The record gives the reactivity of an RNA of 177 nucleotides to DMS and 2A3. The reactions ran in a buffer of 150 mM KOAc, 10 mM MgCl2 and 150 mM bicine (pH 8.5), at 24 C. It was measured as part of the RMDB library RFM100. For DMS, 1,860 sequencing reads were counted.
RNA sequence: GGGAACGACUCGAGUAGAGUCGAAAAUUUGUCUGCUUAAUUGCGAUAACGAACGAGACCUUAACCUGCUAAAUAGCCCGGUCCGCUUUGGCGGGCCGCUGGCUUCUUAGAGGGACUAUCGGCUCAAAUGCGCUACAAAUUUCGAUUUGUAGCGCAUAAAAGAAACAACAACAACAAC
Reactivity to DMS in 0.01 (KOAc 150mM, MgCl2 10mM, bicine 150mM(pH8.5), 24C), signal-to-noise 1, nucleotides 027 to 126: u040u000u010g000u030c060u040g000c000u000u040a090a040u090u000g000c000g010a010u000a050a100c260g000a030a120c150g000a040g000a040c000c020u000u020a030a150c000c070u010g000c000u020a010a000a010u000a000g010c000c000c000g000g020u000c000c000g000c060u000u010u090g050g010c000g000g020g010c000c000g040c100u000g010g030c000u010u000c140u000u000a000g040a090g000g000g000a150c100u010a030u020c220g000g020c010u000c000a130a130
Reactivity to 2A3 in 0.01 (KOAc 150mM, MgCl2 10mM, bicine 150mM(pH8.5), 24C), signal-to-noise 3, nucleotides 027 to 126: u030u030u090g010u010c020u030g040c030u090u130a140a120u300u210g030c010g010a020u030a110a090c080g050a030a030c060g010a030g180a220c010c030u020u000a030a050c010c010u130g180c030u100a040a080a000u090a000g000c000c000c000g000g000u000c000c000g040c030u130u050u300g240g000c000g010g000g000c000c000g020c000u000g000g010c000u000u000c000u000u000a010g000a010g000g040g000a010c030u020a010u120c000g020g000c000u000c030a020a020